[RMDB]
RNA sequence: GGGAACGACUCGAGUAGAGUCGAAAACGAGCAGGGCGGACACGGCGGGGGGCGGCAGGUGCGGGCGGCGCGGCAUCGGCACCGAGUGUACGUGCCGGAAGGGUGAGGGGUCUCGGCCGGGCAUCUGGUAUUUUACGGAGUUCGCUCCGUAAAAUACAAAAGAAACAACAACAACAAC
Reactivity to DMS in 0.01 (KOAc 150mM, MgCl2 10mM, bicine 150mM(pH8.5), 24C), signal-to-noise 1, nucleotides 027 to 126: c130g020a140g000c090a050g000g000g020c240g110g010a050c070a090c130g030g010c090g030g000g000g000g000g000c020g000g000c080a050g000g000u000g020c000g000g000g000c060g000g040c030g050c020g080g040c040a030u000c010g000g030c030a020c060c090g000a180g010u020g000u030a130c130g000u000g000c000c010g000g070a070a040g000g000g000u000g030a120g000g020g010g000u000c030u030c070g020g020c000c020g000g010g000c010a040u000c010u010g030
Reactivity to 2A3 in 0.01 (KOAc 150mM, MgCl2 10mM, bicine 150mM(pH8.5), 24C), signal-to-noise 2, nucleotides 027 to 126: c000g010a010g040c060a010g030g060g000c030g050g010a040c010a000c120g090g050c140g040g010g000g000g020g040c030g010g000c050a050g020g060u110g040c090g000g060g000c000g000g030c010g000c000g010g000c020a020u080c000g020g000c030a040c020c020g040a040g030u130g010u110a110c040g000u010g000c000c010g000g040a040a060g040g000g050u150g040a050g000g040g000g060u030c020u040c080g000g020c010c000g050g030g000c040a020u040c030u110g030